[RMDB]
RNA sequence: GGGAACGACUCGAGUAGAGUCGAAAACGGUACACGACACACAUGCAUCUAGGGUACGAUCCUGAGUCGCGAUCACUCAUGCUAGUGGUACUCAUGGCUAGCAUGGGAUCCUAGCUGAUCUACUCAGCCGCUGUAUCCCGUUCGCGGGAUACAGCGGAAAAGAAACAACAACAACAAC
Reactivity to DMS in 0.01 (KOAc 150mM, MgCl2 10mM, bicine 150mM(pH8.5), 24C), signal-to-noise 1, nucleotides 027 to 126: c110g030g000u000a040c010a070c030g040a110c130a010c070a100c110a130u000g000c080a030u000c020u010a110g070g000g000u000a070c190g050a060u000c030c070u010g000a070g020u000c080g000c140g020a010u000c050a290c040u000c010a010u000g000c010u000a010g040u010g060g020u000a020c260u020c200a070u110g020g030c000u000a060g000c050a000u000g000g010g000a040u000c040c010u000a020g000c030u000g020a140u010c090u000a020c070u000c000a160g010
Reactivity to 2A3 in 0.01 (KOAc 150mM, MgCl2 10mM, bicine 150mM(pH8.5), 24C), signal-to-noise 2, nucleotides 027 to 126: c030g020g000u100a050c070a000c020g100a010c020a010c020a000c010a100u140g040c010a010u030c030u070a040g020g020g040u090a030c050g050a070u070c020c020u080g060a010g110u100c050g020c080g070a010u010c010a010c060u000c010a020u010g010c010u000a000g020u040g220g130u130a110c080u100c150a090u110g140g000c020u040a010g000c000a020u010g010g020g010a020u020c010c000u000a010g000c010u030g020a060u000c020u070a030c060u000c010a030g040